[RMDB]
RNA sequence: GGGAACGACUCGAGUAGAGUCGAAAAGCGUACUACGAUCUCGGGCUGUAGGGAGCUACUCCCAGAAGUCCCAAAUAGGACUUCUGUCAGUAGCGAAGAACUACAGUCUCUAGCGUGGAUCGUAUCGCAAAGGUCUUGGAGUUCGCUCCAAGACCAACGGAAAUUACGAGUUCGCUCGUAAUUUCCGAAAAGAAACAACAACAACAAC
Reactivity to 2A3 in 0.01 (KOAc 150mM, MgCl2 10mM, bicine 150mM(pH8.5), 24C), signal-to-noise 3, nucleotides 027 to 156: g000c010g020u120a150c050u000a000c010g000a010u000c030u020c050g010g000g010c010u000g000u000a010g000g000g030a000g000c000u000a000c000u020c030c000c000a000g010a010a000g010u030c040c050c050a230a300a150u300a110g000g000a010c000u000u000c000u000g010u010c010a000g000u000a000g000c040g100a300a000g030a020a020c000u010a000c000a000g040u000c030u000c000u010a020g090c050g140u280g020g000a000u000c000g000u000a020u300c000g000c000a010a110a070g000g000u000c010u000u010g000g000a020g000u080u170c240g150c130u000c000c000a000a000g000a000c000c000a000a000